[RMDB]
Overview: The record gives the reactivity of an RNA of 207 nucleotides to 2A3 and DMS. For 2A3 the reverse transcriptase was SuperScript II with manganese.

RNA sequence: GGGAACGACUCGAGUAGAGUCGAAAAUUAUACCCGCAUAUCAUUCAGACCCUUUAUGGAACUGUCAUUCAAACCCAAAAAUCUAGUGCAAAUAUUGUCUUAAUUACUUAGGCUAAAAGAAAUAAGUUAUACAAUACACUCUUCGGAGUGUAUUGAACGUUCUAUACAACUUCGGUUGUAUAGAACGAAAAGAAACAACAACAACAAC
Reactivity to 2A3 in 0.01 (KOAc 150mM, MgCl2 10mM, bicine 150mM(pH8.5), 24C), signal-to-noise 2, nucleotides 027 to 156: u140u030a050u040a090c020c000c000g010c010a180u150a040u110c050a060u090u140c060a030g010a110c000c030c000u100u160u080a150u230g030g000a050a040c030u030g050u040c010a020u060u070c040a030a070a200c020c000c000a020a290a000a000a010u080c070u040a010g040u050g150c000a030a030a130u080a110u070u120g020u030c000u030u120a140a150u100u020a050c060u060u030a030g020g010c000u030a110a000a100a100g050a060a120a050u110a080a000g020u000u060a060u000a090c000a000a000u000a000c000a000c000u000c000u010u120c160g110g000a000g010u000g000u000a000u000u000g000a010a000
Reactivity to DMS in 0.01 (KOAc 150mM, MgCl2 10mM, bicine 150mM(pH8.5), 24C), signal-to-noise 1, nucleotides 027 to 156: u000u000a220u000a200c000c000c040g000c160a100u000a060u030c050a110u000u000c060a100g000a200c030c020c030u000u050u010a130u010g050g010a080a020c080u000g000u000c090a270u010u040c020a040a230a190c030c020c000a020a090a020a130a090u010c020u010a070g000u000g020c020a030a110a110u010a080u000u000g000u010c020u000u010a070a130u000u010a110c150u000u000a060g000g000c110u010a010a040a080a130g010a110a070a080u000a030a050g010u000u000a130u000a200c000a030a000u000a010c010a010c010u000c000u000u010c300g080g020a000g000u010g040u010a000u000u000g000a060a130